[RMDB]
Chemical mapping of a 177-nucleotide RNA with DMS and 2A3. The reactions ran in a buffer of 150 mM KOAc, 10 mM MgCl2 and 150 mM bicine (pH 8.5), at 24 C. Reactivities are rounded to 0.1 and cut off at 0 and 3.

RNA sequence: GGGAACGACUCGAGUAGAGUCGAAAAGCCGCCAUCGCCAAUUUGAGUCCCAGCUAUGGUUGUGUAAACUGGACAAAUCAAAAUUUUCCUUUUAAUGACUGUCACUGUCAGAGUCUGGUUUGGUGGGUCUAUGCCUAGACUUCGGUCUAGGCAUAGAAAAAGAAACAACAACAACAAC
Reactivity to DMS in 0.01 (KOAc 150mM, MgCl2 10mM, bicine 150mM(pH8.5), 24C), signal-to-noise 3, nucleotides 027 to 126: g020c030c000g020c000c010a020u010c060g010c000c010a080a070u000u020u020g010a150g000u010c060c010c030a070g000c100u030a080u010g000g020u000u000g010u020g000u010a080a040a050c040u000g010g000a020c070a090a090a190u030c150a030a050a060a140u000u010u000u020c040c010u010u010u040u040a060a140u020g020a040c030u000g010u000c100a100c090u020g000u010c020a070g000a110g010u020c020u000g000g000u010u000u010g010g010u000g000g020g000
Reactivity to 2A3 in 0.01 (KOAc 150mM, MgCl2 10mM, bicine 150mM(pH8.5), 24C), signal-to-noise 4, nucleotides 027 to 126: g040c030c000g020c030c000a040u030c020g000c010c000a130a130u090u010u190g050a050g030u030c010c000c000a000g000c010u020a090u210g090g000u110u080g000u010g060u060a050a050a000c040u040g000g030a010c060a030a110a100u110c050a060a050a100a080u080u050u030u100c030c000u100u160u150u250a110a100u130g020a040c020u060g030u210c050a050c110u070g030u020c010a010g000a020g110u000c010u060g040g040u040u040u040g040g000u060g020g010g010
The DMS profile rests on 5,889 reads. DMS adducts were read by reverse transcription with MarathonRT. Source: RMDB library OK1LIB, as collected in RNAgym.